Source: RMDB library RFM100, as collected in RNAgym. An RNA of 177 nucleotides, treated with DMS and 2A3 and read out base by base. 2A3 adducts were read by reverse transcription with SuperScript II with manganese. The 2A3 profile rests on 1,590 reads. The RNA was probed in 150 mM KOAc, 10 mM MgCl2 and 150 mM bicine (pH 8.5) at 24 C. For DMS, 1,543 sequencing reads were counted.
RNA sequence: GGGAACGACUCGAGUAGAGUCGAAAACAACGCGAAGAACCUUACCUGGGUUUGACAUGCACGGAUUAACCGGUGGAAACAUCGGCCACGCUCGCAAGAGUGGAACGUGCACAGGUGCUGCAUGGCUAAGUAUCGGUGCAUUCGUGCACCGAUACUUAAAAGAAACAACAACAACAAC
Reactivity to DMS in 0.01 (KOAc 150mM, MgCl2 10mM, bicine 150mM(pH8.5), 24C), signal-to-noise 2, nucleotides 027 to 126: c020a040a050c160g030c050g020a080a100g000a040a030c020c000u030u000a140c140c060u000g030g060g020u000u000u010g000a040c170a170u000g000c050a000c040g000g000a030u000u030a060a300c080c000g000g030u000g010g010a230a110a180c010a000u000c000g000g000c070c000a090c000g000c020u010c000g000c170a160a170g000a040g000u000g000g000a000a000c000g000u000g060c020a000c140a060g000g030u000g000c000u010g000c090a180u030g000g000c020u030
Reactivity to 2A3 in 0.01 (KOAc 150mM, MgCl2 10mM, bicine 150mM(pH8.5), 24C), signal-to-noise 2, nucleotides 027 to 126: c060a010a000c030g040c050g080a140a080g010a030a050c000c000u040u070a030c030c030u060g020g020g000u020u070u130g130a080c100a010u060g000c020a010c040g000g000a040u050u040a020a000c000c000g000g000u000g030g000a020a040a000c000a000u020c000g000g020c040c000a030c010g000c010u010c000g010c070a060a050g010a000g030u020g000g010a030a000c000g000u010g000c010a010c000a000g000g020u020g010c010u010g000c030a060u060g030g000c010u010